[RMDB]
RNA sequence: GGGAACGACUCGAGUAGAGUCGAAAAGGGAAAACAACUGCCAGAACGGCAUAAAAUUUGCGGAGAAAAAAGCUGGAUUUAGAUAGUUGGGAUAAUGUGGCUAUUUAGGACCAUGUGGAUCAUAGACUACCCAUAAGAUCUUCGGAUCUUAUGGGUAAAAAGAAACAACAACAACAAC
Reactivity to DMS in 0.01 (KOAc 150mM, MgCl2 10mM, bicine 150mM(pH8.5), 24C), signal-to-noise 4, nucleotides 027 to 126: g010g000g000a110a050a100a090c080a090a110c110u000g010c000c010a100g010a110a200c100g010g000c030a020u000a030a070a100a130u010u000u000g000c050g010g010a110g010a010a070a090a040a100a120g010c030u000g000g000a090u020u000u010a030g010a070u000a040g020u010u000g010g030g010a100u010a050a050u010g020u010g000g010c020u010a030u000u000u000a060g000g010a060c030c010a030u000g030u000g010g010a080u000c060a050u010a100g010a130c180
Reactivity to 2A3 in 0.01 (KOAc 150mM, MgCl2 10mM, bicine 150mM(pH8.5), 24C), signal-to-noise 2, nucleotides 027 to 126: g020g010g050a020a140a000a000c030a040a000c010u010g010c000c010a100g040a250a030c050g020g010c000a000u060a060a260a060a090u100u100u090g050c020g090g030a060g070a120a110a040a030a030a020g050c040u030g020g010a070u090u000u090a050g030a160u000a020g020u050u050g070g000g050a040u050a090a030u220g050u080g130g000c000u030a060u110u090u090a040g050g000a040c000c040a060u130g030u030g070g000a000u060c000a000u040a050g060a050c030

An RNA of 177 nucleotides, treated with DMS and 2A3 and read out base by base. It was measured as part of the RMDB library OK2TRN. The RNA was probed in 150 mM KOAc, 10 mM MgCl2 and 150 mM bicine (pH 8.5) at 24 C. Reactivities are given for positions 27 through 126.